[RMDB]
RNA sequence: GGGAACGACUCGAGUAGAGUCGAAAAGGAAUUUCUCCAUUCGUGGAGAAAUUCCAGCGACUGUGAUUAUAAAAGUGGAGUACUAAAGUACCCACUACCUUUAAUCACAGACAAUAAAGGUCCAUGGUCGUUUCAUAGAACUUCGGUUCUAUGAAACGGGCUGUGUUACAUUCGUGUAACACAGCCCAAAAGAAACAACAACAACAAC
Reactivity to 2A3 in 0.01 (KOAc 150mM, MgCl2 10mM, bicine 150mM(pH8.5), 24C), signal-to-noise 2, nucleotides 027 to 156: g000g000a000a000u010u000u000c000u020c000c000a030u060u110c200g080u020g000g020a000g000a010a000a000u000u030c000c000a000g030c060g080a050c000u010g000u000g010a000u010u000a010u030a020a050a080a010g020u020g020g040a260g060u000a010c030u240a220a250a150g000u010a000c020c000c000a000c000u040a040c000c000u030u000u010a000a000u000c000a000c000a000g030a010c040a000a050u250a090a120a070g090g000u040c060c040a060u180g120g080u110c030g000u000u000u000c000a000u000a000g000a000a000c010u020u050c270g070g000u000u000c000u000a000u000g000a000a000a000c000
Reactivity to DMS in 0.01 (KOAc 150mM, MgCl2 10mM, bicine 150mM(pH8.5), 24C), signal-to-noise 1, nucleotides 027 to 156: g010g020a060a010u000u010u010c000u030c000c010a110u010u030c280g010u000g070g010a020g010a030a000a020u000u000c010c010a090g020c070g070a130c020u000g010u000g020a030u000u000a000u000a000a010a050a090g010u000g000g000a270g030u000a090c010u000a070a130a300g010u010a020c070c000c000a010c030u020a010c060c010u000u010u000a010a010u000c000a000c010a020g000a090c070a100a070u000a100a210a060g010g010u000c010c050a090u000g010g010u000c010g000u000u000u010c000a030u000a020g010a010a010c010u000u010c300g050g030u000u010c000u000a000u010g010a000a000a010c000
Structure probing data (2A3 and DMS) for a 207-nucleotide construct. The reactions ran in a buffer of 150 mM KOAc, 10 mM MgCl2 and 150 mM bicine (pH 8.5), at 24 C. Source: RMDB library PSEUDOB, as collected in RNAgym. For 2A3, 1,113 sequencing reads were counted. Values cover nucleotides 27 to 156.